[RMDB]
RNA sequence: GGGAACGACUCGAGUAGAGUCGAAAAGAUAUGGAUGGAGCUCUGAACUACACUGAGGUGUCGGAAACGACAUGUAGGUGCAGAGCGAUGAAAUCCUAAGUCAAAUCCUCAUGUUCGCAUGAGGAAACUUACAUGGAAACUUCGGUUUCCAUGUAAGAAAAGAAACAACAACAACAAC
Reactivity to DMS in 0.01 (KOAc 150mM, MgCl2 10mM, bicine 150mM(pH8.5), 24C), signal-to-noise 5, nucleotides 027 to 126: g010a030u000a260u000g000g010a010u000g030g010a100g010c010u000c000u010g000a080a040c060u010a300c020a010c050u000g010a170g020g010u000g000u000c000g010g000a070a060a140c000g010a010c000a010u000g000u000a150g000g010u010g010c000a020g000a010g020c010g000a040u010g010a070a100a030u000c000c000u000a050a140g000u000c030a080a080a150u000c000c010u000c000a000u000g000u000u010c200g020c010a010u000g000a010g000g010a000a030a060
Reactivity to 2A3 in 0.01 (KOAc 150mM, MgCl2 10mM, bicine 150mM(pH8.5), 24C), signal-to-noise 3, nucleotides 027 to 126: g020a010u040a020u120g000g010a000u020g060g110a070g030c010u000c010u020g050a070a070c100u200a050c300a010c030u030g050a030g180g100u010g010u000c000g000g000a040a030a040c020g020a000c000a020u300g030u020a000g030g010u010g000c000a000g010a000g000c000g000a010u030g000a040a040a000u010c000c000u020a100a000g050u030c040a060a030a240u020c010c000u000c000a000u010g080u070u070c300g010c120a010u010g000a000g010g000a030a020a010